[RMDB]
RNA sequence: GGGAACGACUCGAGUAGAGUCGAAAAGACGCGGUGUCUCAACAUGUAAGGCGGAAGUACUAGCCUAUAUCCACGCUGUGUCAAGAAGUCUAUAGCGUACAUCAAGAGGGCAAUGUCUAGCCAUACGUAGUACUCGGUACUUCGGUACCGAGUACUAAAAAGAAACAACAACAACAAC
Reactivity to 2A3 in 0.01 (KOAc 150mM, MgCl2 10mM, bicine 150mM(pH8.5), 24C), signal-to-noise 4, nucleotides 027 to 126: g040a010c080g000c040g000g100u030g030u020c000u030c090a080a150c060a090u130g030u100a040a070g030g010c020g020g090a080a000g030u100a070c030u070a040g010c000c000u120a100u020a010u030c030c010a050c020g000c010u000g000u000g020u040c010a050a070g110a220a040g040u040c020u120a060u030a030g010c010g010u060a040c030a090u120c100a100a090g080a140g150g010g010c040a050a030u110g000u010c020u020a040g030c000c000a030u020a100c060g030
Reactivity to DMS in 0.01 (KOAc 150mM, MgCl2 10mM, bicine 150mM(pH8.5), 24C), signal-to-noise 3, nucleotides 027 to 126: g010a060c030g020c170g000g000u020g000u000c000u030c080a060a160c160a100u020g010u000a080a100g050g010c020g000g010a060a090g020u050a050c140u110a250g000c060c010u000a120u030a070u010c090c140a030c050g000c000u010g000u000g000u000c080a060a050g000a090a040g010u010c030u010a060u000a030g000c050g000u000a070c090a070u020c120a070a130g000a080g020g000g000c040a090a050u040g000u000c030u020a090g000c050c020a050u010a020c090g040
Structure probing data (2A3 and DMS) for a 177-nucleotide construct. The DMS profile rests on 3,502 reads. The reactions ran in a buffer of 150 mM KOAc, 10 mM MgCl2 and 150 mM bicine (pH 8.5), at 24 C. The 2A3 profile rests on 3,506 reads. 2A3 adducts were read by reverse transcription with SuperScript II with manganese.